[RMDB]
RNA sequence: GGGAACGACUCGAGUAGAGUCGAAAAUACGGCGCUCCCGGUGCGCCUGGGCAGUAUCAGGCCGUGACGCUGAAGCGCGGCGUCGACAUCCCCUGGGGCGUAACGCAGAUCACCGGCACCGUAGGUGACGCCUUGCAUCUUUCGAGAUGCAAGGCGUAAAAGAAACAACAACAACAAC
Reactivity to 2A3 in 0.01 (KOAc 150mM, MgCl2 10mM, bicine 150mM(pH8.5), 24C), signal-to-noise 4, nucleotides 027 to 126: u120a010c020g020g000c010g010c030u020c000c020c010g030g020u040g020c060g020c000c000u000g020g010g000c110a140g070u150a090u250c030a020g000g050c020c020g050u040g020a030c010g000c070u100g060a200a070g140c140g030c040g100g000c010g020u030c040g020a040c030a140u120c020c010c000c000u040g030g000g030g010c010g010u040a100a020c090g000c050a010g010a120u060c000a000c010c000g010g000c030a040c040c030g050u030a030g000g040u030g020
Reactivity to DMS in 0.01 (KOAc 150mM, MgCl2 10mM, bicine 150mM(pH8.5), 24C), signal-to-noise 7, nucleotides 027 to 126: u000a080c030g000g010c020g000c050u000c080c020c040g000g000u010g020c110g020c020c000u000g010g000g000c130a130g000u010a110u010c020a060g000g000c020c100g020u010g000a040c020g010c060u000g010a150a140g010c130g010c040g000g020c020g010u000c030g010a100c110a120u010c080c100c010c050u000g010g010g000g000c030g010u000a060a060c090g010c080a070g000a120u010c030a030c040c010g000g000c040a160c020c010g010u000a070g000g010u010g010

The data come from the RNA Mapping Database (RMDB), library OK2TST. An RNA of 177 nucleotides, treated with 2A3 and DMS and read out base by base. The reactions ran in a buffer of 150 mM KOAc, 10 mM MgCl2 and 150 mM bicine (pH 8.5), at 24 C.